[RMDB]
The record gives the reactivity of an RNA of 177 nucleotides to 2A3 and DMS. Values cover nucleotides 27 to 126.
RNA sequence: GGGAACGACUCGAGUAGAGUCGAAAAAGUUUAUUUUCUCCUGAAUUGUGAACUUUGUUUAAUACGCAGAGGAUGGGGGAGCUCUGAGUGGGAGCCAUGGUGCAUGUAUCAGGGCUACGUGCAACUCGCAAGAUCUAGAAUUCGUUCUAGAUCUUGCAAAAGAAACAACAACAACAAC
Reactivity to 2A3 in 0.01 (KOAc 150mM, MgCl2 10mM, bicine 150mM(pH8.5), 24C), signal-to-noise 3, nucleotides 027 to 126: a000g020u090u050u030a050u040u080u040u030c040u040c020c030u020g080a120a110u170u120g070u020g070a040a030c010u080u030u000g050u030u130u050a090a120u130a060c040g020c040a000g020a010g100g050a050u110g080g000g000g000g010a020g030c000u010c030u010g060a080g040u100g020g020g040a010g030c020c010a100u120g030g050u060g010c020a040u060g000u030a060u110c030a030g010g020g010c000u010a010c030g040u000g010c020a040a090c030u000c070
Reactivity to DMS in 0.01 (KOAc 150mM, MgCl2 10mM, bicine 150mM(pH8.5), 24C), signal-to-noise 4, nucleotides 027 to 126: a070g000u010u010u010a060u010u000u010u010c050u010c090c080u000g000a100a070u010u010g010u010g010a040a040c020u000u000u000g010u000u010u010a070a110u010a070c210g020c040a020g010a050g000g020a080u010g010g020g010g010g010a180g000c040u000c020u000g000a070g030u000g000g010g020a070g000c080c070a040u000g020g000u000g000c050a050u000g000u000a050u000c030a040g000g000g020c210u000a020c070g020u000g000c030a060a060c110u000c180
For DMS the reverse transcriptase was MarathonRT.